[RMDB]
RNA sequence: GGGAACGACUCGAGUAGAGUCGAAAAGAUAUGGAUGUGUUGAGAAGUGGUCGGAAACGACCAUACUUCAAUGAUGCAUGAAUCCUAAGUCACGGCUAAGACCAUCCCUUCGGGGAUGGUCUUAGAAGAUCACAUACGACUUCGGUCGUAUGUGAUCAAAAGAAACAACAACAACAAC
Reactivity to DMS in 0.01 (KOAc 150mM, MgCl2 10mM, bicine 150mM(pH8.5), 24C), signal-to-noise 2, nucleotides 027 to 126: g000a030u000a100u020g000g000a000u000g010u010g000u020u010g010a100g030a010a060g020u000g010g010u010c000g010g000a020a020a100c000g010a010c000c000a000u000a030c030u000u000c000a280a180u000g010a060u000g010c000a030u020g010a130a050u000c000c000u000a020a080g000u000c060a210c290g020g000c000u000a000a010g000a000c000c000a000u000c000c000c000u000u010c240g040g020g000g000a010u000g000g000u000c000u000u000a000g000a050a050

Chemical mapping of a 177-nucleotide RNA with DMS. The DMS profile rests on 1,822 reads. The data come from the RNA Mapping Database (RMDB), library TTRDEL. The reactions ran in a buffer of 150 mM KOAc, 10 mM MgCl2 and 150 mM bicine (pH 8.5), at 24 C.